An RNA of 207 nucleotides, treated with 2A3 and DMS and read out base by base. The 2A3 profile rests on 5,421 reads.

RNA sequence: GGGAACGACUCGAGUAGAGUCGAAAACGCUGGGACCGUGUCCUAUUCGCGAGGAUCUACUGAAGCGCGCACGGUAGGGAGCGAAAGGACCGGUCCUGUGCUGAAGCGCGCACGGCAACCGAAAGGUGCGAAAUCGAGUCUGGUUCGCCAGACUCGACUUUAACCAGAGGUUCGCCUCUGGUUAAAGAAAAGAAACAACAACAACAAC
Reactivity to 2A3 in 0.01 (KOAc 150mM, MgCl2 10mM, bicine 150mM(pH8.5), 24C), signal-to-noise 4, nucleotides 027 to 156: c030g000c010u030g000g010g000a010c000c000g120u130g030u230c040c010u100a260u260u300c030g000c000g030a170g000g020a010u000c000u010a010c000u030g060a200a070g010c010g000c000g000c000a020c020g020g010u000a000g000g000g000a010g000c000g060a230a060a030g010g000a010c010c000g000g000u000c000c000u010g010u000g010c010u020g030a130a040g000c000g000c000g000c010a000c000g010g010c000a010a020c000c010g050a120a020a050g000g000u020g000c030g040a130a020a030u050c010g000a000g000u000c000u000g010g050u050u090c270g030c080c000a000g000a000c010u000c000g000a000
Reactivity to DMS in 0.01 (KOAc 150mM, MgCl2 10mM, bicine 150mM(pH8.5), 24C), signal-to-noise 1, nucleotides 027 to 156: c010g000c060u030g000g030g040a060c030c030g000u010g050u010c010c000u000a190u000u000c010g060c000g000a150g030g000a060u010c020u010a090c000u020g030a050a090g040c000g010c020g000c030a300c070g020g010u010a160g010g020g010a010g040c030g040a050a040a080g000g000a010c000c000g010g010u000c010c010u040g000u000g000c010u010g010a050a040g030c070g010c030g000c010a300c020g000g000c000a060a100c010c020g010a110a190a150g010g000u000g040c000g010a060a010a150u010c020g010a020g000u010c000u010g000g000u000u000c300g020c020c000a030g000a020c000u010c000g000a000

2A3 adducts were read by reverse transcription with SuperScript II with manganese.